[RMDB]
RNA sequence: GGGAACGACUCGAGUAGAGUCGAAAAUGAUCAACAUAUGGUGCUAGCAAAAUUAGCACAUGAAGAAACUGGAAGAGGUAUAUACGAAGAUAAAGCGAUUAAAAAUUUAUACGCUUCUGAAUAUAUAAUCAUAAGUAGCGUUCGCGCUACUUAUGAUAAAAGAAACAACAACAACAAC
Reactivity to DMS in 0.01 (KOAc 150mM, MgCl2 10mM, bicine 150mM(pH8.5), 24C), signal-to-noise 3, nucleotides 027 to 126: u030g010a200u020c060a090a150c120a080u010a140u030g040g000u000g000c010u000a010g030c090a110a080a130a180u020u040a010g000c000a010c000a060u010g000a080a210g010a090a160a100c140u050g000g000a030a060g040a040g020g010u010a010u000a000u010a000c060g020a160a030g000a150u020a070a060a040g010c010g000a290u030u040a050a040a060a120a180u030u010u010a060u000a110c000g000c000u000u000c020u000g000a140a040u040a050u010a090u010a020
Reactivity to 2A3 in 0.01 (KOAc 150mM, MgCl2 10mM, bicine 150mM(pH8.5), 24C), signal-to-noise 3, nucleotides 027 to 126: u140g030a090u130c060a010a160c070a040u260a070u230g130g010u000g020c000u000a010g040c020a010a060a210a220u170u010a010g000c000a000c000a010u000g000a010a040g060a020a020a080c150u110g070g050a050a020g060a030g110g110u000a010u000a000u000a060c060g000a020a010g030a060u140a100a140a000g040c010g010a020u100u200a000a210a000a010a000u060u150u080a110u020a020c010g000c000u020u000c000u000g010a050a000u030a010u020a020u060a130